Record summary: The data come from the RNA Mapping Database (RMDB), library OK3TST. This 207-nucleotide RNA was probed chemically with 2A3 and DMS. For DMS the reverse transcriptase was MarathonRT. Conditions: 150 mM KOAc, 10 mM MgCl2 and 150 mM bicine (pH 8.5), 24 C.

[RMDB]
RNA sequence: GGGAACGACUCGAGUAGAGUCGAAAAAGCUAUCCCAGCCGCGUGAUUGCCCGACGUGCCACGGUCGGGGGGCGUUGGUGAAGGUAUGCGCGGCCUGUGGUGGCAGUGGCAUGCUGCCGGUGAGUGAUCGCCGUCGGGCGGCUGCGAUUGGCCGUGACUUCAAGCAAAAAUUCGUUUUUGCUUGAAGAAAAGAAACAACAACAACAAC
Reactivity to 2A3 in 0.01 (KOAc 150mM, MgCl2 10mM, bicine 150mM(pH8.5), 24C), signal-to-noise 4, nucleotides 027 to 156: a020g040c050u030a060u070c020c000c000a020g000c000c000g000c010g020u060g120a260u090u240g100c010c000c000g010a010c020g020u110g070c030c010a050c070g080g020u080c060g010g010g000g000g030g000c000g020u050u300g020g010u130g100a130a080g110g040u160a060u140g060c030g000c000g000g000c000c030u040g000u040g020g020u040g020g000c010a000g000u000g030g080c040a060u060g020c010u030g010c010c000g000g010u030g000a060g020u130g040a120u050c020g000c000c000g000u020c030g010g000g020c020g020g000c000u000g010c010g070a090u080u140g000g000c030c030g010u010g040a020
Reactivity to DMS in 0.01 (KOAc 150mM, MgCl2 10mM, bicine 150mM(pH8.5), 24C), signal-to-noise 2, nucleotides 027 to 156: a080g020c090u010a080u000c000c010c040a280g000c010c010g000c000g000u020g020a140u000u000g010c020c000c010g030a120c050g030u000g020c010c030a040c020g020g020u000c010g020g010g010g030g010g010c080g020u000u000g040g010u000g000a170a120g030g020u000a070u010g000c030g000c000g010g000c000c010u000g050u000g020g030u000g000g030c010a070g000u010g000g030c040a120u010g020c000u000g010c060c010g030g010u010g010a060g020u000g020a270u000c000g030c010c020g000u010c030g010g010g010c000g000g030c020u000g000c020g010a150u000u000g020g030c010c010g010u010g000a240